[RMDB]
RNA sequence: GGGAACGACUCGAGUAGAGUCGAAAACUCAGUGGUAAGAGCUGCAUCGAAUCUGGAUAGACUGAUGAAUGCCACAUACCCCAGUGCCCUGCCUUCUGAAAAGAAGUUCAGAAGGUUGAUGCAUUUUCUUUCUUUAAGACUAGCACAUCUCUCUGGGCCUGUUACGUGUUUUCGAACACGUAACAGGAAAAGAAACAACAACAACAAC
Reactivity to 2A3 in 0.01 (KOAc 150mM, MgCl2 10mM, bicine 150mM(pH8.5), 24C), signal-to-noise 4, nucleotides 027 to 156: c090u060c050a020g010u020g030g030u060a130a060g050a050g120c100u110g060c040a030u050c050g050a110a060u050c040u100g010g060a090u160a190g110a100c090u060g010a030u090g060a150a080u050g060c010c000a040c010a030u170a120c010c000c000c010a020g010u010g040c000c020c000u010g000c010c000u000u000c000u000g010a020a050a050a060g280a170a080g050u000u010c000a000g000a010a000g000g000u030u020g000a010u020g000c020a050u070u000u060u000c020u040u050u000c030u040u140u100a070a020g020a030c020u020a010g070c040a030c010a110u030c020u020c010u010c020u030g010g040g000
Reactivity to DMS in 0.01 (KOAc 150mM, MgCl2 10mM, bicine 150mM(pH8.5), 24C), signal-to-noise 1, nucleotides 027 to 156: c070u000c020a170g000u000g020g070u000a000a120g000a110g030c060u010g000c030a060u000c040g030a060a110u010c070u000g030g030a160u000a080g020a070c020u040g000a080u000g020a040a120u020g000c000c050a050c030a190u010a060c060c010c000c000a110g020u010g010c020c060c050u000g030c030c000u000u000c000u010g010a040a080a110a180g010a120a200g000u000u020c020a050g020a020a010g000g030u000u010g000a080u010g000c000a190u000u000u000u000c040u000u010u000c080u000u000u000a080a110g000a090c080u000a080g000c080a080c060a030u000c060u010c090u020c010u010g020g000g030